[RMDB]
RNA sequence: GGGAACGACUCGAGUAGAGUCGAAAAGAGUCCAAACCUUACUAUCUUCUGUGGCAGGUGUUGGUGGUGUAGUAUACAACCUAAAUCCUGGGGAACUGUACCAGGCGCCCGAGGGACCAGGUGGACACACUACUAUGAUGUUCGCAUCAUAGUAGUGAAAAGAAACAACAACAACAAC
Reactivity to DMS in 0.01 (KOAc 150mM, MgCl2 10mM, bicine 150mM(pH8.5), 24C), signal-to-noise 2, nucleotides 027 to 126: g010a150g020u010c020c030a060a120a120c060c020u000u010a100c100u000a070u000c030u000u000c050u000g020u000g010g020c100a080g010g010u000g010u000u010g010g030u000g020g020u010g010u000a070g010u000a090u000a080c090a080a080c040c020u000a070a100a140u000c020c010u000g010g010g010g000a100a080c130u000g000u010a090c090c060a060g010g010c270g010c010c010c020g000a060g000g000g000a110c120c090a040g010g010u000g000g000a070c130a250
Reactivity to 2A3 in 0.01 (KOAc 150mM, MgCl2 10mM, bicine 150mM(pH8.5), 24C), signal-to-noise 5, nucleotides 027 to 126: g040a020g050u030c020c000a100a080a050c040c010u090u110a070c040u070a080u110c040u120u030c040u110g090u130g080g000c020a030g030g030u050g030u150u090g030g060u040g000g060u070g020u040a060g050u010a060u020a140c070a060a060c010c010u030a040a090a090u080c020c020u020g010g020g000g010a060a090c060u090g010u070a060c030c020a030g040g000c040g010c000c010c010g050a050g010g010g020a030c020c010a010g020g010u030g040g000a000c020a000
An RNA of 177 nucleotides, treated with DMS and 2A3 and read out base by base. The data come from the RNA Mapping Database (RMDB), library OK2TST.